[RMDB]
RNA sequence: GGGAACGACUCGAGUAGAGUCGAAAACAUUGCUUGACCAGGAACUGCCCGACCUACUACGUCCUCGUGGAGCUGAGCCGACGACCUCGACUCACCAGGCAUCAUGAGCACGCCCAGCACUGUCUGAUCCCCAUUAAUACUUCGGUAUUAAUGGGGAAAAAGAAACAACAACAACAAC
Reactivity to 2A3 in 0.01 (KOAc 150mM, MgCl2 10mM, bicine 150mM(pH8.5), 24C), signal-to-noise 3, nucleotides 027 to 126: c020a050u050u140g010c010u060u110g040a060c010c050a020g030g050a060a070c040u080g000c010c000c010g040a070c010c020u060a070c040u030a040c050g050u060c000c030u040c020g040u050g060g040a030g020c050u070g030a010g020c030c010g040a050c080g030a040c020c000u010c010g010a030c010u020c020a040c050c040a050g030g000c000a040u050c020a010u090g020a000g030c020a000c040g030c000c030c000a020g040c020a020c050u060g050u070c010u020g050a040
Reactivity to DMS in 0.01 (KOAc 150mM, MgCl2 10mM, bicine 150mM(pH8.5), 24C), signal-to-noise 5, nucleotides 027 to 126: c070a100u010u000g010c030u000u000g010a100c030c070a060g020g010a070a090c090u000g010c030c030c030g020a090c050c040u000a080c080u000a100c100g010u000c060c030u000c110g040u010g010g000a110g010c060u000g010a100g020c020c020g000a050c110g000a100c210c030u000c020g020a050c030u000c030a090c080c060a090g010g010c050a050u000c070a060u010g000a080g020c070a040c080g000c020c030c020a060g000c080a050c110u010g010u000c020u000g000a280

Notes
Chemical mapping of a 177-nucleotide RNA with 2A3 and DMS. The DMS profile rests on 5,742 reads.